[RMDB]
RNA sequence: GGGAACGACUCGAGUAGAGUCGAAAAGAUAUGGACGACUAGGCUAGCCUUAGUCGGAAACGAUGAGGGCUUGGACCCUACUCGUCCUAAGUCAAAACACUCCACAGCCUUCGGGCUGUGGAGUGAAGAACGAAACCAAGUUCGCUUGGUUUCGUUCAAAAGAAACAACAACAACAAC
Reactivity to DMS in 0.01 (KOAc 150mM, MgCl2 10mM, bicine 150mM(pH8.5), 24C), signal-to-noise 2, nucleotides 027 to 126: g020a060u020a250u010g010g010a050c000g000a010c060u000a010g000g020c090u000a050g050c020c000u000u010a300g010u020c010g010g010a070a020a110c000g010a010u000g000a210g030g000g020c050u000u030g000g010a100c300c010c000u000a020c100u000c010g000u000c000c020u000a030a110g010u000c020a060a130a130a210c000a030c000u000c000c000a010c000a000g010c000c010u000u010c160g050g020g010c000u000g000u000g000g000a000g000u000g000a030a100
Reactivity to 2A3 in 0.01 (KOAc 150mM, MgCl2 10mM, bicine 150mM(pH8.5), 24C), signal-to-noise 1, nucleotides 027 to 126: g010a010u020a030u100g000g000a010c000g000a020c010u000a000g020g070c110u180a040g000c000c010u040u050a030g000u000c010g000g000a010a020a010c000g000a010u020g030a140g000g010g040c020u190u250g190g160a130c020c000c010u000a020c010u000c020g020u010c000c000u010a050a000g010u000c030a000a000a040a220c000a000c010u040c000c000a000c000a010g000c000c020u140u300c300g160g000g000c000u000g010u010g000g000a000g000u000g000a020a000

The record gives the reactivity of an RNA of 177 nucleotides to DMS and 2A3.
For 2A3 the reverse transcriptase was SuperScript II with manganese.